[RMDB]
RNA sequence: GGGAACGACUCGAGUAGAGUCGAAAAACUCGUGAGUACGCUCACGAGAACUACGGGGAUGAUUUUACGAACUGAACUCUCUCUUUCUGAUGGAUUAGUGGAGAAAACAGAAAAUUCUGAGUAGCAAUUAAAUGUUGAUCUUCGGAUCAACAUUUAAAAAAGAAACAACAACAACAAC
Reactivity to DMS in 0.01 (KOAc 150mM, MgCl2 10mM, bicine 150mM(pH8.5), 24C), signal-to-noise 5, nucleotides 027 to 126: a090c000u000c000g000u010g010a000g010u010a080c270g020c000u000c010a010c000g000a010g010a070a070c040u000a040c050g000g010g000g020a050u010g000a120u020u010u030u010a080c160g000a120a160c040u000g000a090a170c090u000c000u000c010u000c020u000u000u010c030u000g010a150u010g010g010a050u010u000a030g040u050g000g000a060g000a040a050a100a140c040a030g000a060a060a100a080u010u010c020u010g000a130g010u000a040g000c140a060a110
Reactivity to 2A3 in 0.01 (KOAc 150mM, MgCl2 10mM, bicine 150mM(pH8.5), 24C), signal-to-noise 6, nucleotides 027 to 126: a000c000u000c000g010u000g000a000g010u050a030c250g020c100u000c000a000c000g010a000g010a010a010c010u050a020c010g050g000g040g000a040u050g030a040u080u050u100u180a100c090g030a110a030c050u040g010a040a020c000u000c000u000c000u000c000u040u080u000c050u110g200a190u230g090g020a060u070u070a060g050u070g040g020a030g000a040a060a010a000c030a000g120a070a040a030a050u100u000c010u030g020a010g050u030a010g020c040a030a030